[RMDB]
An RNA of 177 nucleotides, treated with 2A3 and DMS and read out base by base. For 2A3, 964 sequencing reads were counted. For DMS, 2,355 sequencing reads were counted. 2A3 adducts were read by reverse transcription with SuperScript II with manganese.
RNA sequence: GGGAACGACUCGAGUAGAGUCGAAAACGCCGGUGUCUGGACACCCGCAGUACGUCGCAGCUUCGAUCCCGUAUCGGGUGCCUCUCAAGCCUGCCGCGCCUGGAUUACUGCGGUUCAGUUCUUGUCCGAAAUGAAACAGGUUCGCCUGUUUCAUUUCAAAAGAAACAACAACAACAAC
Reactivity to 2A3 in 0.01 (KOAc 150mM, MgCl2 10mM, bicine 150mM(pH8.5), 24C), signal-to-noise 1, nucleotides 027 to 126: c060g040c000c000g070g030u050g000u010c070u100g030g000a020c010a010c030c000c010g040c030a030g020u010a020c020g020u010c000g000c080a030g020c030u080u190c070g050a080u080c050c000c020g070u110a200u250c060g000g020g020u010g030c000c030u120c000u030c020a030a000g000c030c000u060g030c050c020g020c020g070c000c050u110g040g010a030u060u060a020c000u010g000c060g020g000u080u090c010a040g040u030u000c020u060u080g060u000c020c030
Reactivity to DMS in 0.01 (KOAc 150mM, MgCl2 10mM, bicine 150mM(pH8.5), 24C), signal-to-noise 2, nucleotides 027 to 126: c170g020c070c030g010g000u010g000u000c040u000g000g000a060c050a080c190c010c020g000c060a040g010u000a020c070g010u000c300g020c040a080g000c060u000u000c120g010a110u010c010c020c040g020u010a090u000c120g010g000g000u000g000c110c070u020c060u000c060a050a080g000c120c060u000g010c020c070g020c050g000c090c030u010g000g020a090u000u000a020c050u000g010c020g010g000u000u000c140a080g000u010u000c020u010u010g000u010c090c080